[RMDB]
Chemical mapping of a 177-nucleotide RNA with 2A3 and DMS. The data come from the RNA Mapping Database (RMDB), library TTRDEL. DMS adducts were read by reverse transcription with MarathonRT. 2A3 adducts were read by reverse transcription with SuperScript II with manganese. The DMS profile rests on 2,579 reads. Values cover nucleotides 27 to 126. The RNA was probed in 150 mM KOAc, 10 mM MgCl2 and 150 mM bicine (pH 8.5) at 24 C.

RNA sequence: GGGAACGACUCGAGUAGAGUCGAAAAGAUAUGGAUGAUGGCGAGGAUCUACCGUAACAUCUCUCGGAAACGAGAGUGGGUAGGGAGCCACAAUGUCCUAAGUCAAAUCCCCGCUUCGGCGGGGAAAGAUGUAUGUUCACUUCGGUGAACAUACAUCAAAAGAAACAACAACAACAAC
Reactivity to 2A3 in 0.01 (KOAc 150mM, MgCl2 10mM, bicine 150mM(pH8.5), 24C), signal-to-noise 2, nucleotides 027 to 126: g030a010u100a040u190g040g000a040u150g000a070u020g090g030c060g040a300g100g010a010u000c000u000a010c020c000g080u100a090a040c020a280u110c000u020c010u000c000g000g000a060a050a050c010g000a020g000a000g000u010g010g010g000u000a000g000g000g010a010g010c000c010a000c010a030a040u160g010u000c010c010u040a170a010g060u020c010a020a050a140u040c020c010c000c000g010c000u050u090c300g160g000c020g000g030g000g010a000a000a040
Reactivity to DMS in 0.01 (KOAc 150mM, MgCl2 10mM, bicine 150mM(pH8.5), 24C), signal-to-noise 3, nucleotides 027 to 126: g000a030u010a300u010g000g020a030u000g000a100u000g000g030c000g000a120g000g020a040u010c010u000a000c000c000g000u010a050a100c200a030u010c000u000c000u000c000g000g000a060a090a200c010g000a000g010a010g010u000g010g010g020u000a010g000g020g000a060g000c000c010a020c060a060a050u000g000u010c000c000u020a040a160g000u000c020a060a130a170u000c000c000c000c000g000c000u000u000c210g000g000c000g020g010g000g000a000a030a030